[RMDB]
RNA sequence: GGGAACGACUCGAGUAGAGUCGAAAAAUGGCGUGUCCGCUCUGAGCCUACAGUCGACAACGGCGUCUCCCUGAUGGGGGAUGGUCGUGGUUGAUGAUUAAUCUGGGACCGCGUGAGGCAGUAACCUGAGCAGCGAAAACGGAUAGCUGCGGGCGGCGAUGAAAAUAACGUUCGCGUUAUUUUCAUCAAAAGAAACAACAACAACAAC
Reactivity to 2A3 in 0.01 (KOAc 150mM, MgCl2 10mM, bicine 150mM(pH8.5), 24C), signal-to-noise 4, nucleotides 027 to 156: a000u110g050g000c030g010u130g010u050c020c010g040c020u030c040u070g050a040g020c000c000u040a060c050a070g030u020c010g010a000c010a070a000c020g000g010c000g020u000c010u010c010c010c010u150g190a300u300g010g000g000g000g000a010u070g220g010u000c000g000u010g000g000u000u000g010a010u010g010a030u050u190a080a050u020c030u030g000g040g050a040c020c020g020c040g040u080g050a070g040g020c050a030g060u090a050a040c000c030u030g040a020g040c010a000g010c000g050a070a050a010a040c050g030g030a020u050a040g000c010u010g000c010g000g010g000c010g000g020c060
Reactivity to DMS in 0.01 (KOAc 150mM, MgCl2 10mM, bicine 150mM(pH8.5), 24C), signal-to-noise 2, nucleotides 027 to 156: a050u010g030g010c040g030u000g000u010c010c010g030c040u000c030u000g010a120g020c030c010u040a130c050a230g000u000c030g050a010c000a040a030c010g000g000c000g010u010c000u000c010c010c000u010g020a220u010g010g020g000g060g050a010u000g030g040u000c000g020u000g000g000u000u000g000a030u010g000a220u000u000a030a080u000c010u000g010g020g030a130c040c010g030c020g030u000g010a090g020g000c000a160g000u030a090a060c050c030u000g000a160g000c010a050g030c000g020a060a070a090a160c080g010g010a080u000a120g010c020u010g040c030g000g000g030c030g020g040c080